Structure probing data (2A3 and DMS) for a 177-nucleotide construct.
For DMS, 19,704 sequencing reads were counted.
High 2A3 reactivity points to a flexible backbone, as in loops and unpaired stretches.
2A3 adducts were read by reverse transcription with SuperScript II with manganese.
RNA sequence: GGGAACGACUCGAGUAGAGUCGAAAACGUCUCCCUCGUGACGGGAGCGGUGGGCUUCUGCGGGCUCUACACCCUCUUCGGGGUCUCCACCUGUCCUCGUAAGGAGGGGACAGACCCCUCGAAGACCUAAACACUUCAAAUUCGUUUGAAGUGUUUAAAAAGAAACAACAACAACAAC
Reactivity to 2A3 in 0.01 (KOAc 150mM, MgCl2 10mM, bicine 150mM(pH8.5), 24C), signal-to-noise 5, nucleotides 027 to 126: c010g060u050c020u010c020c010c010u050c140g230u160g120a080c100g000g000g000a020g010c010g030g040u050g010g030g000c020u050u050c050u300g090c190g090g010g000c040u010c010u080a030c040a080c030c010c010u010c000u020u010c010g000g000g020g030u020c060u080c070c030a080c020c020u050g040u050c000c000u020c010g030u060a070a050g110g090a070g000g030g010g000a000c000a010g020a010c000c010c000c000u010c010g010a020a010g010a030c000c010
Reactivity to DMS in 0.01 (KOAc 150mM, MgCl2 10mM, bicine 150mM(pH8.5), 24C), signal-to-noise 9, nucleotides 027 to 126: c060g010u010c020u000c000c000c000u000c180g020u010g010a100c220g000g000g000a020g010c030g000g020u000g010g000g000c020u000u000c060u000g020c260g000g000g020c110u000c030u010a050c120a290c020c010c020u000c010u000u000c010g010g000g000g000u010c080u000c080c110a130c150c030u000g000u000c000c000u000c030g010u010a160a110g020g000a230g000g000g000g010a030c120a030g000a060c210c090c000c010u000c050g010a020a020g010a060c130c080